The record gives the reactivity of an RNA of 177 nucleotides to DMS and 2A3. It was measured as part of the RMDB library OK1LIB. For 2A3 the reverse transcriptase was SuperScript II with manganese. DMS adducts were read by reverse transcription with MarathonRT. The reactions ran in a buffer of 150 mM KOAc, 10 mM MgCl2 and 150 mM bicine (pH 8.5), at 24 C.
RNA sequence: GGGAACGACUCGAGUAGAGUCGAAAAGGCGCGGUGCUGCAACUCGCGUGUGUGUGCGGCCGCUUCGCACGACGCGGAUGGUGGGGGGCCCGUGACGGGCUCUUGUGGUGGAGCGGCGCUCCGCUCACAUUAUUAUAAAUUUCGAUUUAUAAUAAUGAAAAGAAACAACAACAACAAC
Reactivity to DMS in 0.01 (KOAc 150mM, MgCl2 10mM, bicine 150mM(pH8.5), 24C), signal-to-noise 3, nucleotides 027 to 126: g010g020c030g010c090g010g010u010g010c060u020g010c120a090a110c060u020c050g010c020g000u010g010u030g010u010g020u020g010c040g000g020c030c030g020c030u020u000c010g030c010a040c030g000a070c030g020c040g020g000a080u040g010g060u010g010g010g000g040g000g000c000c010c000g010u050g010a080c300g020g000g000c010u010c010u000u040g000u010g010g020u010g010g000a030g020c000g010g010c050g010c050u000c100c010g000c000u020c050a170
Reactivity to 2A3 in 0.01 (KOAc 150mM, MgCl2 10mM, bicine 150mM(pH8.5), 24C), signal-to-noise 4, nucleotides 027 to 126: g060g000c030g000c030g040g050u070g020c080u070g030c050a030a050c030u080c050g030c050g000u070g020u010g020u020g010u020g010c020g080g110c030c020g020c020u050u050c010g000c010a010c040g090a020c020g030c030g070g110a170u140g080g080u070g020g020g000g000g000g010c000c020c010g020u120g120a120c300g000g010g000c000u020c000u040u160g050u050g030g050u070g010g020a040g000c000g010g000c010g020c020u010c020c020g010c000u050c010a030